[RMDB]
RNA sequence: GGGAACGACUCGAGUAGAGUCGAAAAAGCCCUUAGUUAUGGCAGUAGUCAAUAGAGAGAGGGAUGGUCAAACUGGGUCGGGUGGUCGUGCCCGAGGGCUCUGUUACACUUGCGGAUCCCCGGGACAUCAGUAGUGUCUAUUCGUAGACACUACUGAAAAAGAAACAACAACAACAAC
Reactivity to 2A3 in 0.01 (KOAc 150mM, MgCl2 10mM, bicine 150mM(pH8.5), 24C), signal-to-noise 5, nucleotides 027 to 126: a000g080c040c000c000u040u140a120g020u090u070a080u090g030g000c040a060g060u210a040g010u070c030a090a100u090a130g110a010g000a010g000a030g060g050g010a080u060g080g000u090c060a080a060a110c090u070g000g000g150u100c050g030g000g050u050g010g030u050c100g080u120g060c000c000c000g040a220g000g000g000c010u010c010u000g020u040u070a080c190a070c130u120u200g000c010g000g010a020u010c000c000c000c000g000g000g020a020c010a050
Reactivity to DMS in 0.01 (KOAc 150mM, MgCl2 10mM, bicine 150mM(pH8.5), 24C), signal-to-noise 9, nucleotides 027 to 126: a120g010c010c000c010u010u000a080g010u010u000a050u010g010g010c020a110g020u000a070g020u000c060a070a090u000a100g010a100g000a100g010a080g000g000g000a120u010g010g010u000c100a050a090a110c110u010g000g010g010u010c090g010g000g010u000g010g010u000c120g010u010g000c010c000c010g010a080g010g000g010c110u000c010u000g010u000u010a090c240a090c220u000u000g000c010g000g000a030u000c010c000c010c020g000g000g010a030c090a070